[RMDB]
RNA sequence: GGGAACGACUCGAGUAGAGUCGAAAAAGGAACCUUUUUUGUAAGAAAAAGACAAACCUCCCUUAUCUUUCGAACCCCGUCAGGCCCGGAAGGGAGCAGCGGUAGAAAGAACUUCAACGCUCAGAGGGUUGCGGAAUCGAGCAGAACUUGAGGUACAGCUUGUAUAGUAGUUCGCUACUAUACAAGCAAAAGAAACAACAACAACAAC
Reactivity to DMS in 0.01 (KOAc 150mM, MgCl2 10mM, bicine 150mM(pH8.5), 24C), signal-to-noise 1, nucleotides 027 to 156: a050g020g010a190a200c130c000u010u000u010u000u000u000g000u010a140a210g000a010a010a000a070a000g020a120c020a000a070a080c000c090u000c000c000c000u010u000a150u000c030u000u000u000c010g010a140a090c070c050c090c060g000u000c000a110g000g030c000c010c010g050g060a170a110g000g000g000a130g000c080a100g010c000g060g000u000a120g000a040a080a110g000a120a100c060u010u000c020a070a090c110g020c010u010c020a160g000a130g010g000g040u010u010g000c020g040g000a140a200u000c050g010a080g000c050a140g000a020a300c060u000u000g010a010g010g010u000a030c050a230
Reactivity to 2A3 in 0.01 (KOAc 150mM, MgCl2 10mM, bicine 150mM(pH8.5), 24C), signal-to-noise 2, nucleotides 027 to 156: a000g030g030a040a040c010c000u000u000u000u000u030u010g200u150a180a160g000a060a010a000a010a030g030a030c080a080a070a020c040c010u020c010c000c000u050u050a180u060c010u050u010u000c020g080a140a090c000c110c000c030g050u030c020a020g030g000c000c000c000g100g120a080a120g080g010g000a000g030c020a000g000c000g000g010u030a020g000a020a030a010g000a010a010c020u170u160c040a010a050c040g030c030u050c090a090g020a040g080g140g020u100u160g070c030g050g050a030a060u140c050g000a030g000c020a010g060a050a050c020u030u010g000a000g060g000u090a050c030a030